[RMDB]
Structure probing data (DMS) for a 177-nucleotide construct.
RNA sequence: GGGAACGACUCGAGUAGAGUCGAAAAUACGUGACCUUCGGGUCACGUAACCGGCGUUCCCAAGUCAAAAAGAGAGACGCAAUCUCGACAGCGGCGUUUUCGUAUGAGUUGCUUUCGAGCAACUCAAAUUUGUGGUGUGAUUCGUCACACCACAAAUAAAAGAAACAACAACAACAAC
Reactivity to DMS in 0.01 (KOAc 150mM, MgCl2 10mM, bicine 150mM(pH8.5), 24C), signal-to-noise 2, nucleotides 027 to 126: u010a000c000g010u000g000a020c000c000u000u000c190g020g000g010u000c000a000c000g010u000a000a110c100c040g010g010c020g000u040u000c000c000c010a210a140g030u020c180a040a090a050a080a040g000a180g010a010g030a080c070g010c150a040a100u000c040u000c030g010a120c110a030g020c250g000g010c050g010u000u000u020u010c020g000u010a090u000g000a000g010u000u000g010c000u010u000u000c190g000a000g010c000a000a000c000u020c000a000a030

The RNA was probed in 150 mM KOAc, 10 mM MgCl2 and 150 mM bicine (pH 8.5) at 24 C.